[RMDB]
RNA sequence: GGGAACGACUCGAGUAGAGUCGAAAACGACCUUACAGGCUCAAGCGAUCCUCUUGCCUCAGCCUCCCGUGUAGCGUGGACUACAGGCGAGCACCACCAUGCCCAGCCGAUGUUUUAAUUUUUGGUACCAUGUGUAACACUUCGGUGUUACACAUGGAAAAGAAACAACAACAACAAC
Reactivity to 2A3 in 0.01 (KOAc 150mM, MgCl2 10mM, bicine 150mM(pH8.5), 24C), signal-to-noise 2, nucleotides 027 to 126: c020g010a010c000c000u080u100a080c060a110g070g000c000u050c100a050a030g000c010g070a040u000c000c020u010c040u060u060g030c000c030u020c020a020g020c010c010u030c000c010c000g060u040g010u070a040g040c120g030u090g100g050a090c000u050a050c060a010g010g010c030g020a010g000c000a040c030c000a020c000c000a000u030g000c000c020c030a000g000c010c020g010a050u040g090u000u070u000u160a180a220u100u060u030u070u060g040g000u020a090
Reactivity to DMS in 0.01 (KOAc 150mM, MgCl2 10mM, bicine 150mM(pH8.5), 24C), signal-to-noise 2, nucleotides 027 to 126: c140g010a140c010c010u000u000a110c130a150g020g020c040u000c050a070a090g020c040g000a050u000c050c030u000c050u000u010g020c010c010u000c060a070g020c070c010u000c020c020c020g020u000g010u000a050g000c050g020u000g020g020a110c040u010a050c030a070g000g010c070g020a080g020c080a070c040c040a040c030c030a070u000g010c020c010c020a120g020c050c030g000a060u010g010u000u010u010u010a070a090u000u000u000u000u000g010g000u010a190